[RMDB]
RNA sequence: GGGAACGACUCGAGUAGAGUCGAAAACUUUUUUUGAAGUCAACAUUAUAAACGUCUUAAUGUAAAAUAAUUAACGCCCCCGCAAGCGAGGGCUUGGCUGAUCUUAAUGAGGCCAGGUGCGACGCGGCUACCACAUGAUAUUCGUAUCAUGUGGUAGAAAAGAAACAACAACAACAAC
Reactivity to DMS in 0.01 (KOAc 150mM, MgCl2 10mM, bicine 150mM(pH8.5), 24C), signal-to-noise 6, nucleotides 027 to 126: c020u010u000u010u010u020u040u020g000a080a070g000u010c090a110a070c060a020u000u000a030u010a060a130a090c140g020u010c160u000u010a030a030u010g000u000a080a060a080a050u010a050a040u020u010a080a100c150g000c020c010c000c000c010g010c130a070a120g000c020g010a090g000g000g010c000u000u000g000g000c010u000g000a140u010c130u040u020a060a060u020g010a250g000g030c000c000a020g010g020u010g000c030g010a090c070g010c010g010g000
Reactivity to 2A3 in 0.01 (KOAc 150mM, MgCl2 10mM, bicine 150mM(pH8.5), 24C), signal-to-noise 9, nucleotides 027 to 126: c020u070u030u030u030u010u090u270g090a050a020g030u070c040a030a050c010a040u040u060a080u110a110a200a050c080g070u020c060u080u060a080a040u040g030u100a010a080a040a050u170a060a110u140u100a080a040c060g050c000c000c000c000c000g000c040a080a060g040c010g030a030g010g080g000c000u000u000g000g000c000u020g060a090u020c040u090u250a200a160u240g020a020g000g000c000c000a000g020g000u070g050c010g020a020c040g000c000g000g000